[RMDB]
RNA sequence: GGGAACGACUCGAGUAGAGUCGAAAAGACUAAGCGCGACAUUGGUUAUCAACCCUAUCCUAACUAUAUUUAUUGCCAGGUUGCCAGGGAAGUACCCGAUGUUAUUCCCAGUUACCUAUCCAAAUUCCGUUGACCAUGUGUUCGCACAUGGUCAACGAAAAGAAACAACAACAACAAC
Reactivity to DMS in 0.01 (KOAc 150mM, MgCl2 10mM, bicine 150mM(pH8.5), 24C), signal-to-noise 1, nucleotides 027 to 126: g040a020c020u000a050a090g000c080g090c030g000a000c040a050u000u010g000g000u000u000a050u040c150a260a270c050c020c010u000a050u000c030c030u010a060a120c160u000a040u110a030u000u050u000a020u030u060g030c060c050a000g010g100u000u000g000c260c080a080g030g000g020a170a040g030u000a000c110c000c020g020a000u000g030u000u000a160u000u040c090c000c010a140g000u000u000a040c020c060u000a090u040c030c080a040a090a030u000u030c030
Reactivity to 2A3 in 0.01 (KOAc 150mM, MgCl2 10mM, bicine 150mM(pH8.5), 24C), signal-to-noise 2, nucleotides 027 to 126: g030a010c050u120a110a050g030c040g000c000g040a010c000a030u010u010g000g010u060u010a080u120c040a050a110c020c000c000u010a090u000c010c020u040a040a040c060u050a090u050a130u170u240u030a150u130u120g080c080c010a000g020g000u060u050g080c020c020a000g000g000g010a040a000g000u030a060c010c010c000g020a000u100g000u100u010a030u010u050c030c000c000a000g030u000u120a080c000c010u030a040u100c000c000a080a030a160u090u090c120
Chemical mapping of a 177-nucleotide RNA with DMS and 2A3. Conditions: 150 mM KOAc, 10 mM MgCl2 and 150 mM bicine (pH 8.5), 24 C. Reactivities are rounded to 0.1 and cut off at 0 and 3. The 2A3 profile rests on 928 reads. For DMS, 826 sequencing reads were counted.